This 177-nucleotide RNA was probed chemically with 2A3 and DMS. The data come from the RNA Mapping Database (RMDB), libraries RFM100 and RFMREP.

[RMDB]
RNA sequence: GGGAACGACUCGAGUAGAGUCGAAAAGUCGUGCUCGCGGUUGAUCUUAGAUUAAUCCUUGUAAAAGGAAUUUGGAAUGUAUCUACCCUGGAAGUAUGAAUUAAUAUACUUAUAAUUAGAUCCAUCUCACUGAGGAAAUAUUCGUAUUUCCUCAGUGAAAAGAAACAACAACAACAAC
Reactivity to 2A3 in 0.01 (KOAc 150mM, MgCl2 10mM, bicine 150mM(pH8.5), 24C), signal-to-noise 5, nucleotides 027 to 126: g030u010c010g020u020g010c010u010c020g030c050g000g020u010u030g020a050u000c020u050u090a040g030a110u020u160a070a060u040c010c000u020u030g130u190a070a150a000a080g030g020a020a060u090u040u040g070g020a110a040u030g010u030a010u000c000u010a010c000c010c030u040g050g020a000a020g000u010a010u020g040a080a020u140u160a200a040u190a010u020a180c000u060u010a030u010a130a130u100u010a020g000a050u020c030c010a040u010c020u000
Reactivity to DMS in 0.01 (KOAc 150mM, MgCl2 10mM, bicine 150mM(pH8.5), 24C), signal-to-noise 2, nucleotides 027 to 126: g000u000c010g010u000g000c040u000c040g030c170g000g000u000u000g000a050u010c020u000u000a060g010a120u020u000a070a150u000c000c000u020u020g010u070a060a130a040a000g010g020a030a100u010u000u000g000g000a090a030u010g000u000a010u000c010u000a010c020c050c000u000g000g010a040a020g010u000a000u000g000a150a160u030u030a070a060u070a080u000a020c000u000u000a020u000a060a080u040u000a070g000a030u000c020c030a020u020c080u010